[RMDB]
RNA sequence: GGGAACGACUCGAGUAGAGUCGAAAACAUGUGCUCAACCAUGGUGAACAUGGCUUCCGCGUCGGCCUCGGUGGCCUUGGACAUCUGCUUGAUGUCGCCACCUGCGAAGAAGGUCUUUUUCGCGGGGCGCAAUUUCUGUUUUCGAACAGAAAUUGCGAAAAGAAACAACAACAACAAC
Reactivity to DMS in 0.01 (KOAc 150mM, MgCl2 10mM, bicine 150mM(pH8.5), 24C), signal-to-noise 3, nucleotides 027 to 126: c060a070u010g010u000g000c060u000c090a080a100c070c030a020u000g000g000u000g000a110a200c030a020u010g010g000c080u000u010c040c000g010c060g020u000c220g000g010c040c000u000c060g000g030u000g000g010c110c300u020u000g010g000a050c000a020u000c000u000g020c300u010u020g000a010u010g000u000c010g000c010c020a040c010c000u000g010c130g000a100a070g010a110a040g000g010u000c020u010u010u000u000u000c020g020c000g010g000g010g010
Reactivity to 2A3 in 0.01 (KOAc 150mM, MgCl2 10mM, bicine 150mM(pH8.5), 24C), signal-to-noise 1, nucleotides 027 to 126: c030a030u120g060u110g080c030u030c100a030a030c030c000a020u050g100g000u210g140a120a040c010a010u020g020g030c020u180u060c010c010g010c010g010u030c050g030g020c000c010u010c020g010g000u020g000g000c040c000u060u110g030g000a010c000a040u000c020u110g240c140u170u210g000a010u010g000u010c010g000c010c020a040c020c000u030g050c060g040a070a040g070a060a010g050g030u020c000u100u040u030u000u010c000g010c000g010g000g000g030
Chemical mapping of a 177-nucleotide RNA with DMS and 2A3. Conditions: 150 mM KOAc, 10 mM MgCl2 and 150 mM bicine (pH 8.5), 24 C. Reactivities are rounded to 0.1 and cut off at 0 and 3. The data come from the RNA Mapping Database (RMDB), library OK2TST.